[RMDB]
RNA sequence: GGGAACGACUCGAGUAGAGUCGAAAAUGGAGGCUUCAACAUCAUACAGCAUGGAAUCUGGCACCAGAACGCUGCUGGAUGCGCGCAGCAAGGUGCUGCCCUCCUCUGUGCAGGCGCUGCGAGCUGCGUCUCCGUACAGGUUCGCCUGUACGGAGACAAAAGAAACAACAACAACAAC
Reactivity to DMS in 0.01 (KOAc 150mM, MgCl2 10mM, bicine 150mM(pH8.5), 24C), signal-to-noise 4, nucleotides 027 to 126: u000g020g020a090g010g000c120u000u000c070a070a070c070a050u000c100a100u000a200c090a070g030c070a050u020g000g000a100a070u010c100u010g000g020c010a050c020c010a110g000a090a080c210g010c050u010g020c010u000g030g010a130u010g020c120g010c140g010c000a030g030c000a090a140g010g010u000g000c010u000g020c100c040c020u000c050c030u000c030u000g010u000g000c060a050g010g010c050g010c040u000g000c050g020a110g020c040u000g010c110
Reactivity to 2A3 in 0.01 (KOAc 150mM, MgCl2 10mM, bicine 150mM(pH8.5), 24C), signal-to-noise 2, nucleotides 027 to 126: u090g040g000a040g040g030c020u110u090c060a060a060c000a060u090c010a060u080a220c040a020g020c030a010u020g060g050a090a070u040c100u100g030g000c040a030c000c020a040g040a120a040c070g010c040u030g000c020u030g030g080a060u150g100c130g040c000g010c030a010g000c000a040a070g090g000u060g020c000u000g030c000c010c000u030c000c020u010c010u060g060u050g000c030a050g070g000c010g000c020u030g010c020g040a040g010c020u040g040c040